Structure probing data (2A3 and DMS) for a 177-nucleotide construct.
Source: RMDB libraries RFM100 and RFMREP, as collected in RNAgym.
The RNA was probed in 150 mM KOAc, 10 mM MgCl2 and 150 mM bicine (pH 8.5) at 24 C.

RNA sequence: GGGAACGACUCGAGUAGAGUCGAAAAGAAAGAAAUGGGCCAGAAUCUCAGCUGGUGUAAGUCAGCAGAGCUCCACUGACAUUAUUAGUGCUCCAGUGAUUCACACCAGCUGUGAAUCUGGUCUAAAAAUCGUAUCUCUGUUCGCAGAGAUACGAUUAAAAGAAACAACAACAACAAC
Reactivity to 2A3 in 0.01 (KOAc 150mM, MgCl2 10mM, bicine 150mM(pH8.5), 24C), signal-to-noise 4, nucleotides 027 to 126: g060a020a070a010g100a020a150a040u150g010g000g000c000c000a000g000a070a070u010c010u010c010a000g000c000u000g020g000u010g000u020a040a010g020u000c000a000g030c040a000g020a000g020c010u110c100c060a060c050u100g080a030c060a130u110u220a070u100u090a260g030u030g020c000u020c000c020a070g070u010g010a000u040u010c020a000c000a000c000c000a000g000c000u000g010u000g000a000a000u000c010u000g000g010u000c000u000a000a000a000
Reactivity to DMS in 0.01 (KOAc 150mM, MgCl2 10mM, bicine 150mM(pH8.5), 24C), signal-to-noise 3, nucleotides 027 to 126: g010a110a090a120g000a070a080a090u020g000g020g000c000c000a010g000a020a030u000c010u000c000a010g020c000u000g010g000u000g010u000a060a010g020u000c000a030g000c140a150g000a020g000c170u020c140c110a090c080u010g010a080c290a190u040u060a050u000u000a060g010u000g020c000u010c000c050a220g000u010g010a020u000u010c090a030c000a010c000c010a000g000c020u000g000u000g000a000a020u000c000u000g000g000u000c010u010a000a050a090